[RMDB]
RNA sequence: GGGAACGACUCGAGUAGAGUCGAAAAAGCACUCCGGUACGCCGGAGUGCAAGCCGGCGGGGGCGACAUUUAUCACAGCGUGUCGCGUGCCCGACCCCGCUUAAGCUGCUGAGUACGCUCAGCAGCAUGGCUGAGCAGAUUUCGAUCUGCUCAGCCAAAAAGAAACAACAACAACAAC
Reactivity to 2A3 in 0.01 (KOAc 150mM, MgCl2 10mM, bicine 150mM(pH8.5), 24C), signal-to-noise 1, nucleotides 027 to 126: a000g000c000a000c000u000c000c010g070g000u020a010c190g050c030c000g000g020a000g000u010g000c000a000a000g040c000c040g030g000c000g020g000g010g010g000c000g010a010c000a000u080u190u220a210u280c140a020c140a210g110c020g060u000g000u040c020g000c040g000u090g080c010c010c000g070a100c000c000c020c000g000c000u070u000a100a030g000c000u000g000c010u000g000a000g000u000a020c260g000c040u000c000a020g000c000a000g020c000a010